[RMDB]
RNA sequence: GGGAACGACUCGAGUAGAGUCGAAAAAGGUCGCCGCAACGGUAAUUCAAUUUAGUACGAGAGGAACCGUUGAUUCAGAUAAUUGGUUUUUGCGGCUGUCUGACCAGGCAGUGCCGCGAAGCUACCAUGAAUCCUUCUCGUUCGCGAGAAGGAUUCAAAAAGAAACAACAACAACAAC
Reactivity to DMS in 0.01 (KOAc 150mM, MgCl2 10mM, bicine 150mM(pH8.5), 24C), signal-to-noise 3, nucleotides 027 to 126: a090g000g020u010c030g000c070c090g000c030a010a000c010g000g000u010a030a150u010u000c030a030a130u030u000u030a140g000u040a120c200g010a220g000a140g010g000a300a010c000c020g000u010u000g000a080u020u010c040a170g000a080u010a030a120u020u000g010g000u000u000u010u000u020g020c000g010g000c000u000g000u000c000u000g000a160c290c300a060g010g000c000a020g000u050g000c000c000g020c000g010a000a040g000c050u000a030c030c000a060
Reactivity to 2A3 in 0.01 (KOAc 150mM, MgCl2 10mM, bicine 150mM(pH8.5), 24C), signal-to-noise 3, nucleotides 027 to 126: a000g060g010u050c050g000c050c030g020c020a020a000c000g000g060u060a010a010u000u000c040a020a080u060u200u190a170g070u140a110c060g030a060g020a030g150g120a010a040c000c010g010u000u000g020a040u100u070c050a030g010a080u060a120a110u210u120g010g010u000u010u000u000u160g050c010g010g000c000u000g010u000c000u040g160a180c000c150a000g000g000c000a000g010u030g250c010c000g000c000g000a000a000g010c080u110a060c000c000a040